Overview
Conditions: 150 mM KOAc, 10 mM MgCl2 and 150 mM bicine (pH 8.5), 24 C. An RNA of 177 nucleotides, treated with DMS and 2A3 and read out base by base. Values cover nucleotides 27 to 126. The data come from the RNA Mapping Database (RMDB), library RFMREP.
[RMDB]
RNA sequence: GGGAACGACUCGAGUAGAGUCGAAAAUCCAUGUCCGAGAGGGAAAGAACCCAGACCAUCAUCUAAGGUCCCUAAAUCUAUGCUAAGUUGAUCAAACGUGGUUUGAUUGCUUUGACAGCUAGGAUGUGUUGAGGAGAAUGUUCGCAUUCUCCUCAACAAAAGAAACAACAACAACAAC
Reactivity to DMS in 0.01 (KOAc 150mM, MgCl2 10mM, bicine 150mM(pH8.5), 24C), signal-to-noise 1, nucleotides 027 to 126: u000c010c020a170u010g010u000c000c060g010a100g040a170g000g010g000a020a060a150g000a060a090c020c010c070a070g000a030c040c040a090u000c100a040u000c060u000a130a190g000g000u000c000c020c020u010a040a120a040u000c040u000a060u020g010c040u010a020a020g040u000u010g000a000u000c010a040a020a010c010g010u000g070g000u020u000u000g000a010u010u010g010c010u000u000u020g000a120c140a010g010c020u000a160g000g000a080u010g020u010
Reactivity to 2A3 in 0.01 (KOAc 150mM, MgCl2 10mM, bicine 150mM(pH8.5), 24C), signal-to-noise 1, nucleotides 027 to 126: u000c010c000a030u030g020u000c080c040g100a070g000a030g180g020g030a070a060a080g040a070a050c040c000c000a000g040a020c010c020a070u060c000a000u010c050u090a000a060g100g030u020c020c010c020u070a120a100a000u000c030u050a030u130g000c020u000a000a000g040u090u150g150a000u000c000a010a010a010c080g300u290g130g000u030u010u000g000a030u000u040g020c050u000u000u090g080a090c010a000g020c060u040a020g000g000a050u000g030u020